[RMDB]
RNA sequence: GGGAACGACUCGAGUAGAGUCGAAAAAGUGGAUCUACGGAUCCACAAUUCAGCGCAAGGAAGGGAAGCUUGAGGCUACCUUAGGUGGUGACGACACCUCGCCCCCAAGCAGCACUACGGUGCUGCACGAGCAAGUCGACUUCGGUCGACUUGCUCGAAAAGAAACAACAACAACAAC
Reactivity to 2A3 in 0.01 (KOAc 150mM, MgCl2 10mM, bicine 150mM(pH8.5), 24C), signal-to-noise 1, nucleotides 027 to 126: a000g020u020g000g000a000u050c020u050a080c300g080g010a000u000c000c000a000c000a000a000u000u000c000a020g000c010g000c050a090a030g040g100a070a030g060g050g070a190a050g040c000u040u120g080a020g160g000c000u020a030c000c000u060u020a010g030g000u010g030g050u060g050a050c060g030a000c000a000c010c010u000c000g000c000c000c000c000c000a020a050g000c000a010g030c000a000c000u050a030c290g170g000u000g000c000u000g020c000a000